[RMDB]
RNA sequence: GGGAACGACUCGAGUAGAGUCGAAAAACACAUGAUAGGGGUUUUGGAUUAGGACAAAGACAUAUCACAAUUUCUACCAUAGGUAUUGCAUCUGGAAUUGAAAAACUAGCCGAAGAGAAUCUGCAGAGGUGAAGGAUAAUUUCGAUUAUCCUUCACCAAAAGAAACAACAACAACAAC
Reactivity to DMS in 0.01 (KOAc 150mM, MgCl2 10mM, bicine 150mM(pH8.5), 24C), signal-to-noise 4, nucleotides 027 to 126: a070c050a070c080a050u010g000a100u020a060g020g010g020g020u000u000u000u000g020g010a070u000u010a100g010g010a070c070a030a080a090g010a090c060a040u000a060u000c040a090c110a070a070u010u000u000c030u000a090c090c040a080u000a060g010g010u000a020u010u010g030c060a040u010c050u000g000g000a090a070u000u010g000a060a050a050a080a070c090u010a050g010c020c050g020a070a060g020a100g000a090a060u010c050u010g030c100a080g010a220